[RMDB]
RNA sequence: GGGAACGACUCGAGUAGAGUCGAAAAGAUAUGGACACUGUCUCGCUGUAGAGGUCGGAAACGACUCCCCACCUACAGAACUACGAGGACAGUGUCCUAAGUCAAAAGCAAGUGUUCGCACUUGCAAGAAUCCAUGUUCGUUCGCGAACAUGGAUUCAAAAGAAACAACAACAACAAC
Reactivity to 2A3 in 0.01 (KOAc 150mM, MgCl2 10mM, bicine 150mM(pH8.5), 24C), signal-to-noise 2, nucleotides 027 to 126: g020a020u090a030u240g000g020a000c000a000c000u000g000u000c020u000c010g020c020u020g000u000a000g010a020g000g000u020c030g020g020a050a120a040c050g050a030c060u110c030c010c010c010a020c010c000u010a010c000a020g040a140a080c170u290a020c180g040a110g090g130a020c000a010g000u000g000u000c000c000u000a020a030g030u000c050a090a070a080a000g030c010a000a030g000u000g030u100u240c280g030c140a020c000u020u020g000c000a000a010
Reactivity to DMS in 0.01 (KOAc 150mM, MgCl2 10mM, bicine 150mM(pH8.5), 24C), signal-to-noise 2, nucleotides 027 to 126: g000a050u000a300u020g020g030a000c000a030c010u000g000u010c000u010c030g000c000u000g000u000a030g000a140g020g010u000c030g020g040a010a080a220c020g010a010c010u000c040c030c020c020a300c040c050u000a000c000a030g000a010a060c110u010a300c060g030a080g000g000a010c000a010g000u000g000u020c010c000u000a000a070g010u010c080a030a070a100a030g000c010a010a000g030u000g010u000u030c300g000c000a020c000u000u000g000c000a010a110